RNA sequence: GGGAACGACUCGAGUAGAGUCGAAAAUCACAAGAGAUUGAGAAACUCUCCCGGCCCUCUGUCCCUCCUUGGAGGCAAGGAGAGCUAACCAGCGAGAGUAAGUAGGACGAGGAACAGAAUCCGAAGGGGCACCGAGACACGGCUAUGAGAAAGGAGACGAUCAUAUAACGUUCGCGUUAUAUGAUCGAAAAGAAACAACAACAACAAC
Reactivity to 2A3 in 0.01 (KOAc 150mM, MgCl2 10mM, bicine 150mM(pH8.5), 24C), signal-to-noise 1, nucleotides 027 to 156: u100c030a010c040a130a000g020a030g000a090u080u140g030a030g040a230a170a070c000u030c000u010c000c020c040g020g000c000c020c010u080c110u030g110u270c000c010c000u000c020c020u040u170g020g000a000g010g040c030a030a000g010g000a010g010a000g050c010u050a040a030c010c020a010g020c080g030a030g000a000g070u110a110a000g000u040a030g020g020a010c050g040a060g020g030a050a000c040a020g090a120a010u060c060c080g030a080a060g020g000g000g000c020a010c020c060g030a030g020a050c040a030c130g030g040c010u040a060u120g050a060g060a080a050a000g040g020a050g030a030

Background:
An RNA of 207 nucleotides, treated with 2A3 and read out base by base. Source: RMDB library VIROID, as collected in RNAgym. The 2A3 profile rests on 831 reads. Values cover nucleotides 27 to 156.